[RMDB]
Conditions: 150 mM KOAc, 10 mM MgCl2 and 150 mM bicine (pH 8.5), 24 C. Structure probing data (2A3 and DMS) for a 207-nucleotide construct. The DMS profile rests on 8,309 reads. It was measured as part of the RMDB library OK3TST.

RNA sequence: GGGAACGACUCGAGUAGAGUCGAAAACUUCUUUAGAGUAGCUCAUGUGGUUAAACUCUAAAUGUGAUCGAUGAGGAUAACUUGCCUCCCACCAUGGAAUCACAUGGCAAAGUACAGAUCAUAGGCAUUUAAUCACAGGCAUGAAAACCUAUGUUCACUGAUAAUACUACUUCGGUAGUAUUAUCAGAAAAGAAACAACAACAACAAC
Reactivity to 2A3 in 0.01 (KOAc 150mM, MgCl2 10mM, bicine 150mM(pH8.5), 24C), signal-to-noise 6, nucleotides 027 to 156: c010u060u060c010u050u130u080a040g010a040g040u080a030g040c020u050c120a190u170g050u130g020g020u050u050a070a070a030c020u010c040u080a060a100a120u150g010u040g010a050u050c100g030a080u070g030a040g050g000a050u060a270a190c080u060u210g050c010c020u000c010c010c010a020c000c010a030u040g040g100a210a180u230c050a090c000a130u030g010g000c040a080a040a020g030u060a070c070a080g010a020u030c010a010u020a020g050g000c040a030u010u050u080a030a010u040c020a010c020a070g080g020c040a040u090g060a040a070a040a020c030c020u060a040u090g020u040u040c050a010
Reactivity to DMS in 0.01 (KOAc 150mM, MgCl2 10mM, bicine 150mM(pH8.5), 24C), signal-to-noise 3, nucleotides 027 to 156: c060u000u000c050u010u000u010a080g040a100g000u000a120g030c030u010c060a120u000g030u000g020g020u000u000a040a070a070c020u000c030u000a030a050a120u000g020u000g000a060u000c030g010a150u000g010a090g010g010a130u000a060a080c090u000u000g020c050c030u020c000c040c080a110c020c010a030u010g010g010a200a140u000c120a090c000a010u000g000g020c050a030a060a080g020u000a110c100a130g020a050u000c020a030u000a060g010g020c110a070u000u000u000a030a040u000c020a070c020a040g030g020c020a110u000g000a080a080a110a120c020c020u000a070u000g000u000u000c040a230